[RMDB]
RNA sequence: GGGAACGACUCGAGUAGAGUCGAAAAGCUGAGUAUACGAGGAUAGUUCAUUCUCGUAUGCAUGAUUGGACAAAUUAAAAUCUCAAUUUGGAUCAGGGCCUCCCUCCAGCGACGGCCGAACAUACAACAUACGGUAGUGUUUCGACACUACCGUAUGAAAAGAAACAACAACAACAAC
Reactivity to DMS in 0.01 (KOAc 150mM, MgCl2 10mM, bicine 150mM(pH8.5), 24C), signal-to-noise 6, nucleotides 027 to 126: g020c030u010g000a160g020u000a010u000a010c000g010a020g010g000a000u010a120g010u010u010c150a080u000u000c000u000c000g010u000a000u000g010c010a100u000g000a060u000u000g000g010a060c020a030a020a030u000u000a070a090a110a120u010c180u010c110a030a020u000u000u000g010g000a100u000c030a070g020g000g010c010c000u000c010c010c020u010c100c010a020g010c020g000a080c200g010g000c020c030g010a040a040c110a050u000a130c200a030a110
Reactivity to 2A3 in 0.01 (KOAc 150mM, MgCl2 10mM, bicine 150mM(pH8.5), 24C), signal-to-noise 2, nucleotides 027 to 126: g030c010u020g010a000g040u010a000u000a010c010g000a010g010g020a000u020a050g220u210u230c060a010u020u000c010u000c000g000u030a000u000g000c010a070u100g040a040u050u140g030g020a000c020a000a030a020u120u100a050a120a150a240u110c090u040c130a040a060u030u010u080g070g030a140u060c030a030g060g000g070c010c010u000c010c000c000u010c020c020a010g010c030g000a020c050g020g000c000c010g000a040a020c020a000u220a050c040a060a000

The record gives the reactivity of an RNA of 177 nucleotides to DMS and 2A3. For DMS the reverse transcriptase was MarathonRT. In probing experiments dimethyl sulfate is read out at A N1 and C N3, which are open when not base-paired. The reactions ran in a buffer of 150 mM KOAc, 10 mM MgCl2 and 150 mM bicine (pH 8.5), at 24 C. The DMS profile rests on 7,765 reads.